An RNA of 177 nucleotides, treated with 2A3 and DMS and read out base by base. It was measured as part of the RMDB library OK1LIB. 2A3 adducts were read by reverse transcription with SuperScript II with manganese. The 2A3 profile rests on 58,202 reads. DMS adducts were read by reverse transcription with MarathonRT. The RNA was probed in 150 mM KOAc, 10 mM MgCl2 and 150 mM bicine (pH 8.5) at 24 C.
RNA sequence: GGGAACGACUCGAGUAGAGUCGAAAAUCAAGAGUACAAUUUGGAACCUAGAUUGUGCUCGGAGUAAAUCAAAGUCGAUAAAAUCGAAGACAUCUUACUCAUCUGUCAUGUCUUCAAGUUGACAGAAGAUAGUUUGGUGAUUCGUCACUGAACUAUCAAAAGAAACAACAACAACAAC
Reactivity to 2A3 in 0.01 (KOAc 150mM, MgCl2 10mM, bicine 150mM(pH8.5), 24C), signal-to-noise 9, nucleotides 027 to 126: u130c040a050a050g000a000g000u000a000c000a000a010u000u020u070g140g040a120a040c020c000u030a030g000a010u000u000g000u000g000c000u000c000g000g000a020g020u080a030a050a040u130c150a160a070a020g060u010c010g030a020u130a140a190a020a050u110c070g030a050a000g040a020c020a040u020c040u050u050a040c020u020c070a180u030c040u020g040u040c010a020u030g060u050c050u140u110c150a060a030g020u010u020g020a020c010a020g040a040a010
Reactivity to DMS in 0.01 (KOAc 150mM, MgCl2 10mM, bicine 150mM(pH8.5), 24C), signal-to-noise 9, nucleotides 027 to 126: u030c080a130a090g000a010g010u000a000c000a000a000u000u000u000g000g010a130a160c260c090u020a030g010a000u000u000g010u000g000c000u000c000g000g000a080g020u010a020a040a060u020c130a080a140a080g010u000c010g010a040u010a070a060a070a300u020c050g000a020a020g000a070c110a040u010c090u000u000a040c060u010c070a110u020c050u000g000u010c110a020u010g010u010c080u030u020c140a060a080g010u000u010g000a020c020a040g000a090a100